[RMDB]
RNA sequence: GGGAACGACUCGAGUAGAGUCGAAAAUGUGUAUAAAGAUAGUAUAGGUCUACCAAUUAUAGCAAUAAUUGCGCUUAUAGGGGCAGUAGCGGCUAGCAUUUUCGCAGUGGGGUAUCUAGUAAACAGCCAAACUCCUCUUAUUCGUAAGAGGAGUUUGAAAAGAAACAACAACAACAAC
Reactivity to 2A3 in 0.01 (KOAc 150mM, MgCl2 10mM, bicine 150mM(pH8.5), 24C), signal-to-noise 5, nucleotides 027 to 126: u110g030u000g040u030a020u070a160a190a070g100a080u110a030g080u060a060u040a120g060g020u030c060u050a060c020c010a050a020u100u060a050u050a110g080c130a130a010u070a140a040u060u080g020c070g000c040u080u050a100u100a170g000g000g010g000c030a030g020u070a010g040c010g050g000c010u030a010g020c040a080u020u060u030u080c030g000c020a040g000u050g030g020g010g000u060a050u020c010u010a010g020u100a030a060a140c050a030g010c000
Reactivity to DMS in 0.01 (KOAc 150mM, MgCl2 10mM, bicine 150mM(pH8.5), 24C), signal-to-noise 6, nucleotides 027 to 126: u020g020u020g000u020a060u020a070a080a080g010a110u010a050g010u020a060u020a050g000g020u010c040u010a120c270c020a040a050u010u010a030u010a100g010c180a080a080u010a040a020u010u020g020c080g000c040u000u010a040u010a070g000g000g010g010c040a060g020u010a060g010c080g010g010c060u000a050g010c040a060u000u010u010u020c070g020c050a040g010u010g010g000g000g020u000a040u010c050u010a080g020u000a070a050a070c160a080g000c170
Chemical mapping of a 177-nucleotide RNA with 2A3 and DMS. The 2A3 profile rests on 3,245 reads. 2A3 is a SHAPE reagent: it acylates the 2'-hydroxyl of flexible nucleotides of all four kinds. The DMS profile rests on 14,506 reads. For 2A3 the reverse transcriptase was SuperScript II with manganese. The data come from the RNA Mapping Database (RMDB), library OK1LIB. Values cover nucleotides 27 to 126.